Source: RMDB library OK1LIB, as collected in RNAgym. Chemical mapping of a 177-nucleotide RNA with DMS and 2A3.
RNA sequence: GGGAACGACUCGAGUAGAGUCGAAAAGGAGAUCGAAGAAGACCGACGUCAGCACGGUCCGGAUGUAGGUCCGCAUGCAUCCCAGUUGACGAAACUUAACGAUUUCCAAAGCGGACAAGAAGUCAAAAGUAUAUCACUGGUUCGCCAGUGAUAUACUAAAAGAAACAACAACAACAAC
Reactivity to DMS in 0.01 (KOAc 150mM, MgCl2 10mM, bicine 150mM(pH8.5), 24C), signal-to-noise 5, nucleotides 027 to 126: g010g000a040g020a010u000c020g010a080a120g030a140a070g000a090c070c100g000a200c030g030u020c080a040g010c070a130c120g010g010u010c100c170g030g000a020u010g030u010a040g010g000u000c000c020g000c010a090u000g000c010a010u000c000c010c220a130g020u000u000g000a030c110g000a100a020a070c020u010u000a060a110c010g000a020u000u000u000c000c010a070a090a100g000c000g000g010a030c010a170a090g030a100a100g010u020c090a050a090a110
Reactivity to 2A3 in 0.01 (KOAc 150mM, MgCl2 10mM, bicine 150mM(pH8.5), 24C), signal-to-noise 8, nucleotides 027 to 126: g000g000a000g010a010u020c020g030a080a040g060a050a010g040a180c030c060g060a080c030g090u150c070a030g030c110a030c090g070g050u030c040c040g000g000a000u000g000u010a000g040g010u000c000c010g000c000a000u000g000c000a000u000c010c010c010a010g000u010u020g030a050c090g060a120a050a020c020u040u020a070a010c000g010a010u010u000u000c010c010a040a070a010g000c010g000g010a000c020a020a040g170a110a000g090u180c120a050a080a000
The 2A3 profile rests on 16,219 reads. 2A3 adducts were read by reverse transcription with SuperScript II with manganese.